[RMDB]
Annotation
Structure probing data (DMS and 2A3) for a 177-nucleotide construct. In probing experiments dimethyl sulfate is read out at A N1 and C N3, which are open when not base-paired. The RNA was probed in 150 mM KOAc, 10 mM MgCl2 and 150 mM bicine (pH 8.5) at 24 C.

RNA sequence: GGGAACGACUCGAGUAGAGUCGAAAAGGAACGUUGUUCGCAACGUUCCGUGCCGGAAACGGACAUGACGAUGGCGCGCAUGUCGGGAAACCGUAAACGCGAGCAUCAUGGUGUUCGCACCAUGAAACUCGUAUGUGUACUUCGGUACACAUACGAGAAAAGAAACAACAACAACAAC
Reactivity to DMS in 0.01 (KOAc 150mM, MgCl2 10mM, bicine 150mM(pH8.5), 24C), signal-to-noise 3, nucleotides 027 to 126: g000g000a000a020c000g020u000u000g000u010u010c210g020c010a030a010c000g000u000u000c000c000g020u010g020c040c030g010g010a090a100a190c010g000g000a040c030a020u000g000a110c100g020a070u000g000g020c030g010c010g010c030a300u000g010u000c010g010g000g010a130a040a170c030c000g030u010a030a130a110c110g000c000g020a060g020c080a100u000c000a030u000g000g030u000g010u000u000c120g030c050a060c010c020a040u010g000a050a080a100
Reactivity to 2A3 in 0.01 (KOAc 150mM, MgCl2 10mM, bicine 150mM(pH8.5), 24C), signal-to-noise 3, nucleotides 027 to 126: g000g000a000a010c010g000u000u020g010u050u080c190g020c080a000a000c000g000u000u000c010c000g000u070g040c020c020g030g020a080a090a020c050g030g030a020c010a050u050g030a030c080g070a060u110g090g090c040g000c030g000c060a020u090g040u050c000g010g000g030a110a060a020c000c020g010u120a040a070a040c040g010c040g020a020g110c020a050u040c000a000u030g010g000u010g020u030u060c150g010c050a010c010c010a030u060g020a070a050a050